Description: An RNA of 207 nucleotides, treated with DMS and 2A3 and read out base by base. The DMS profile rests on 9,829 reads. The reactions ran in a buffer of 150 mM KOAc, 10 mM MgCl2 and 150 mM bicine (pH 8.5), at 24 C. The data come from the RNA Mapping Database (RMDB), library OK3TST.

RNA sequence: GGGAACGACUCGAGUAGAGUCGAAAAGACUCCGUCACAGAGGGUAUGUACAAAUGGGCAGCUCUUGGUGGGCCCAGAUGUGAUUGGGUUGAUGGGCACAGAACUGUUAAGACUUUUUUGUGGUGAAUGCCGUGGUCCUCGUCACCUCCUGCCCUGCAGAUAUGAAAAGAUUCGUCUUUUCAUAUCUAAAAGAAACAACAACAACAAC
Reactivity to DMS in 0.01 (KOAc 150mM, MgCl2 10mM, bicine 150mM(pH8.5), 24C), signal-to-noise 3, nucleotides 027 to 156: g010a070c000u010c000c040g010u010c040a080c060a110g010a160g000g010g030u000a040u000g010u000a160c080a050a080a120u010g010g030g040c010a090g010c030u000c100u010u000g020g030u000g010g030g000c010c000c020a040g010a130u000g020u000g010a090u010u000g030g010g020u000u000g000a110u000g020g010g050c010a060c030a070g010a060a050c030u000g010u000u000a100a150g010a100c020u000u000u000u010u000u000g010u000g010g020u000g000a090a090u000g010c020c020g010u000g020g010u000c020c030u010c050g010u000c030a080c030c020u010c060c000u000g010c000c000c000u000g010c180
Reactivity to 2A3 in 0.01 (KOAc 150mM, MgCl2 10mM, bicine 150mM(pH8.5), 24C), signal-to-noise 5, nucleotides 027 to 156: g030a020c020u010c030c010g050u050c040a040c030a050g080a060g010g010g040u100a100u210g110u080a100c080a040a080a120u080g010g010g030c000a030g010c020u050c010u170u140g040g010u030g040g070g000c000c020c010a030g030a080u070g020u030g020a050u050u090g020g000g000u030u030g040a090u090g020g020g020c040a030c010a040g070a080a020c020u050g040u160u170a130a040g120a140c030u040u020u030u050u100u090g050u060g010g060u060g060a110a070u140g030c000c020g030u050g020g030u060c010c020u030c040g050u040c010a020c020c000u030c000c030u020g000c000c010c010u000g030c010